RNA sequence: GGGAACGACUCGAGUAGAGUCGAAAAGUCACAGUCCGGCCAGACCUCUCCGGUGGGUGUCAAUAGCGGUCCUGUGGUUGGGGGUCGUUGUAUCCCAAAAACGGAGGUCCUUUCCGAGAUCCUCUCGGCCCUGGGGAGCAAUCCCCGAACGGCCCGCACGUCCUAUAUCAUUCGUGAUAUAGGACGUAAAAGAAACAACAACAACAAC
Reactivity to DMS in 0.01 (KOAc 150mM, MgCl2 10mM, bicine 150mM(pH8.5), 24C), signal-to-noise 2, nucleotides 027 to 156: g010u000c030a030c020a150g040u010c030c020g030g000c050c040a090g000a020c010c010u020c010u020c020c110g000g030u000g020g030g010u010g040u000c040a190a100u010a060g010c010g000g010u010c030c010u000g060u000g020g020u010u010g050g010g010g030g000u010c000g050u000u010g000u000a100u000c000c000c010a030a040a080a110a100c060g010g010a050g040g010u000c030c060u000u010u010c040c030g010a100g010a110u010c070c080u010c030u000c020g040g000c040c030c030u010g010g040g080g020a060g000c280a090a190u000c000c000c040c000g010a010a050c030g000g030c010c010c030g020c180
This 207-nucleotide RNA was probed chemically with DMS. DMS adducts were read by reverse transcription with MarathonRT. Source: RMDB library OK3TST, as collected in RNAgym. For DMS, 3,678 sequencing reads were counted. The reactions ran in a buffer of 150 mM KOAc, 10 mM MgCl2 and 150 mM bicine (pH 8.5), at 24 C.